[RMDB]
RNA sequence: GGGAACGACUCGAGUAGAGUCGAAAAGUGUAACGUCACUUUGAUGGCGGUACUAUGAAUUGAUGCAAGGUGUGGAGCGACCUUAAACAGUUCUGGUGGUGCUCUGAAUGGAGUGCUCUACUGAGAUUUAACUUAUGCACGUUCGCGUGCAUAAGAAUCUAGCAUAAGACUUCGGUCUUAUGCUAGAAAAAGAAACAACAACAACAAC
Reactivity to 2A3 in 0.01 (KOAc 150mM, MgCl2 10mM, bicine 150mM(pH8.5), 24C), signal-to-noise 6, nucleotides 027 to 156: g050u040g020u020a050a000c010g010u010c010a030c060u200u150u280g220a300u050g040g000c010g000g020u020a010c020u030a050u140g050a050a100u090u090g050a060u090g080c070a040a010g010g000u020g010u070g030g010a000g010c000g010a010c000c000u070u130a120a100a010c020a050g010u010u020c010u020g020g030u030g000g020u010g010c000u000c010u080g130a090a080u250g030g000a010g000u020g010c020u000c030u060a070c050u100g070a050g040a220u040u140u170a080a010c000u000u000a000u000g000c010a010c010g010u030u040c170g020c010g070u000g000c000a000u000a000a000g000a000a010
Reactivity to DMS in 0.01 (KOAc 150mM, MgCl2 10mM, bicine 150mM(pH8.5), 24C), signal-to-noise 1, nucleotides 027 to 156: g050u000g000u010a000a030c040g010u010c010a020c030u000u000u000g000a110u010g010g000c020g020g000u000a040c010u000a080u010g020a100a130u010u020g010a110u000g040c060a080a030g010g000u010g010u000g040g000a090g010c000g010a120c000c040u010u010a060a100a090c020a110g000u010u000c050u020g010g010u000g020g010u000g010c020u020c010u000g010a120a160u000g020g000a100g050u000g000c020u000c060u000a070c040u010g000a070g020a140u000u000u000a050a130c020u000u000a010u000g000c000a010c000g050u000u000c300g030c020g040u010g020c000a000u000a000a010g010a060a090